The record gives the reactivity of an RNA of 177 nucleotides to DMS and 2A3. For 2A3, 785 sequencing reads were counted. For DMS the reverse transcriptase was MarathonRT.

RNA sequence: GGGAACGACUCGAGUAGAGUCGAAAAAAGCUAUUGAAAUAGUCUGAUGUCAAAAGCCAUUCCACCCUUAUUGGAACGGCCAGGUAUGGGUAAAUUGCAGCACCAUAGACCAUUGGUAACGUUGCUCCAGAACCGUUUAAUUCGUUAAACGGUUCUGAAAAGAAACAACAACAACAAC
Reactivity to DMS in 0.01 (KOAc 150mM, MgCl2 10mM, bicine 150mM(pH8.5), 24C), signal-to-noise 3, nucleotides 027 to 126: a100a050g010c030u000a050u000u000g000a090a110a100u000a060g010u000c090u000g000a110u000g020u000c070a040a050a060a100g010c000c020a110u000u000c010c000a110c140c040c040u020u020a070u000u020g020g000a030a020c060g020g020c020c060a030g000g020u000a040u000g000g020g010u010a040a070a090u000u000g030c080a040g020c070a070c010c020a050u000a080g010a130c030c060a100u020u010g010g000u010a060a080c070g000u000u000g000c040u010c140
Reactivity to 2A3 in 0.01 (KOAc 150mM, MgCl2 10mM, bicine 150mM(pH8.5), 24C), signal-to-noise 1, nucleotides 027 to 126: a000a000g070c060u060a060u120u140g110a170a120a120u040a060g100u040c070u090g050a080u110g070u000c060a000a060a060a000g000c020c000a010u000u000c020c000a020c010c020c010u040u160a110u060u140g020g000a040a010c020g050g040c000c030a000g030g000u030a020u140g100g030g000u160a110a120a080u160u110g080c080a040g000c020a030c020c000a050u040a060g100a020c020c030a110u070u030g030g030u070a070a000c020g020u040u090g070c010u020c040